[RMDB]
RNA sequence: GGGAACGACUCGAGUAGAGUCGAAAAAGGCGUUCGCGCCUCUUAUAGCGUACUACUUUGCUUUUGACGCCUUGAGCGUUGAAAGGCUCCCAAAUAGGAGCCUGGAGCAAGAUGAGGGCGAUAAGCAAAGUAUCGCACAUCGGAUGUUCGCAUCCAAGACAAUUGGCGUGUUCGCACGCCAAUUGUCAAAAGAAACAACAACAACAAC
Reactivity to 2A3 in 0.01 (KOAc 150mM, MgCl2 10mM, bicine 150mM(pH8.5), 24C), signal-to-noise 1, nucleotides 027 to 156: a000g000g000c000g070u150u180c190g050c050g000c230c020u040c040u160u150a210u230a020g010c030g060u080a040c020u000a000c080u000u000u000g020c010u090u160u040u090g130a030c010g000c000c000u000u000g020a020g000c000g050u070u030g000a090a010a000g010g010c000u000c010c010c010a200a300a110u300a180g000g000a000g030c000c000u000g010g000a020g040c010a020a000g040a110u300g200a140g180g000g000c020g020a020u000a000a000g000c000a000a000a000g000u000a040u160c030g020c000a010c030a080u260c140g000g000a030u000g050u040u080c130g020c050a010u040c040c000a030a000